[RMDB]
This 177-nucleotide RNA was probed chemically with DMS and 2A3. Values cover nucleotides 27 to 126. It was measured as part of the RMDB library OK2TRN. The reactions ran in a buffer of 150 mM KOAc, 10 mM MgCl2 and 150 mM bicine (pH 8.5), at 24 C. For 2A3 the reverse transcriptase was SuperScript II with manganese. DMS adducts were read by reverse transcription with MarathonRT.

RNA sequence: GGGAACGACUCGAGUAGAGUCGAAAAGCGUGCUCUCCUUUAUCGGAACUUGGUCUAAUACUCAAGUCUCUUCCAGCACCUGAAAAUAGAGACAUGUCUGAGAUAUACCCUGAGACUGUGUGGGUCACUGUACUCGACUAUUCGUAGUCGAGUACAGAAAAGAAACAACAACAACAAC
Reactivity to DMS in 0.01 (KOAc 150mM, MgCl2 10mM, bicine 150mM(pH8.5), 24C), signal-to-noise 3, nucleotides 027 to 126: g020c050g000u000g010c030u000c060u000c040c030u000u000u010a110u030c100g010g010a080a080c060u010u000g010g010u010c040u000a080a090u010a120c040u000c030a010a080g000u000c030u000c030u020u000c050c050a110g000c070a070c030c040u010g000a030a030a070a090u000a040g010a050g010a070c030a070u000g000u000c020u000g010a090g010a090u010a070u010a100c040c010c020u000g010a140g020a070c040u000g030u000g020u000g000g010g010u000c080a140
Reactivity to 2A3 in 0.01 (KOAc 150mM, MgCl2 10mM, bicine 150mM(pH8.5), 24C), signal-to-noise 1, nucleotides 027 to 126: g030c030g000u070g040c010u000c000u000c010c020u050u170u060a140u130c020g030g040a020a050c020u030u050g020g000u040c040u120a120a070u070a180c020u020c070a030a040g000u010c020u040c040u130u030c030c010a010g030c030a060c000c010u050g020a100a010a000a000u120a010g070a010g000a030c010a020u120g030u000c020u020g050a010g040a060u140a020u070a160c010c020c000u040g030a020g000a050c030u030g070u020g010u080g090g020g040u020c020a020